[RMDB]
RNA sequence: GGGAACGACUCGAGUAGAGUCGAAAAGGAUGCUCGUUCGCGAGCAUCCACUGAGAUAGCGACUAUAAAGAUUAAGUCUUCCUACUCGAGACAGGAUGUCUAUGCUCCUGGCCUUCGGGCCAGGAAAUUUCAUAUCUUGUUUCGACAAGAUAUGAAAAAAAGAAACAACAACAACAAC
Reactivity to DMS in 0.01 (KOAc 150mM, MgCl2 10mM, bicine 150mM(pH8.5), 24C), signal-to-noise 6, nucleotides 027 to 126: g000g010a000u000g000c000u000c000g030u010u010c210g020c010g020a010g010c000a000u000c000c000a020c120u000g000a180g010a100u010a090g010c050g020a020c010u000a110u010a080a050a060g010a090u000u020a090a160g000u000c010u000u000c260c010u000a020c010u000c000g010a010g010a110c070a070g000g000a090u010g010u000c030u000a090u010g010c170u000c000c000u000g000g010c000c000u000u010c180g030g010g010c000c000a000g000g010a010a000a040
Reactivity to 2A3 in 0.01 (KOAc 150mM, MgCl2 10mM, bicine 150mM(pH8.5), 24C), signal-to-noise 4, nucleotides 027 to 126: g000g000a010u000g010c000u010c010g020u040u080c250g010c000g110a000g000c000a000u000c000c010a000c010u060g030a030g030a040u140a080g090c020g010a000c000u040a030u180a300a120a040g080a060u120u230a150a080g080u000c000u030u040c010c010u020a010c000u000c000g020a020g030a050c030a020g090g070a110u130g060u040c020u080a090u140g100c010u020c000c010u000g000g010c020c000u030u030c200g040g010g000c000c000a000g000g000a010a000a000

This 177-nucleotide RNA was probed chemically with DMS and 2A3.
2A3 adducts were read by reverse transcription with SuperScript II with manganese.
For 2A3, 4,946 sequencing reads were counted.
For DMS, 8,215 sequencing reads were counted.
DMS adducts were read by reverse transcription with MarathonRT.